RNA sequence: GGGAACGACUCGAGUAGAGUCGAAAAUGAUGUUUAUAACAAUAAUAAAAAGAUUGGAGUUAAUACCGUAUCAAUGGUGCGUCCAACGAUAUUGCGAAAGCCGGCUAAAAUCGCCGCAAAGCUUACAUUACGCGAACGAAUCGAGCAACGUGCGCAAACACAUAUCCAAAUUCGUUUGGAUAUGUGUAAAAGAAACAACAACAACAAC
Reactivity to 2A3 in 0.01 (KOAc 150mM, MgCl2 10mM, bicine 150mM(pH8.5), 24C), signal-to-noise 3, nucleotides 027 to 156: u030g020a020u050g000u040u120u130a200u160a070a030c050a020a040u240a210a000u100a160a120a050a020a020g100a100u020u040g010g000a020g030u070u140a080a060u050a200c010c020g040u020a030u200c080a090a140u150g030g010u020g050c070g080u030c000c000a010a010c010g010a000u010a010u150u110g000c060g060a080a000a000g040c120c020g010g000c020u060a070a110a040a130u190c030g000c010c010g020c040a070a090a010g010c020u040u040a020c000a110u060u090a020c090g010c000g000a010a000c010g010a080a020u100c020g000a000g050c020a020a040c030g010u050g000c080g000c020a020a070
Reactivity to DMS in 0.01 (KOAc 150mM, MgCl2 10mM, bicine 150mM(pH8.5), 24C), signal-to-noise 2, nucleotides 027 to 156: u000g010a130u010g000u010u000u020a100u020a190a200c000a050a110u010a120a150u020a100a070a100a100a170g020a100u010u010g000g000a240g000u000u000a060a090u010a050c040c000g040u000a160u010c070a070a120u010g060g000u000g000c070g010u010c020c020a040a030c050g010a130u000a070u000u000g030c020g020a160a150a180g010c120c030g050g010c000u000a020a090a140a070u010c050g010c000c000g040c050a060a040a090g010c030u000u010a090c030a070u000u010a040c090g010c000g000a030a040c040g000a130a160u010c070g000a050g000c000a050a030c030g020u000g010c070g050c040a080a160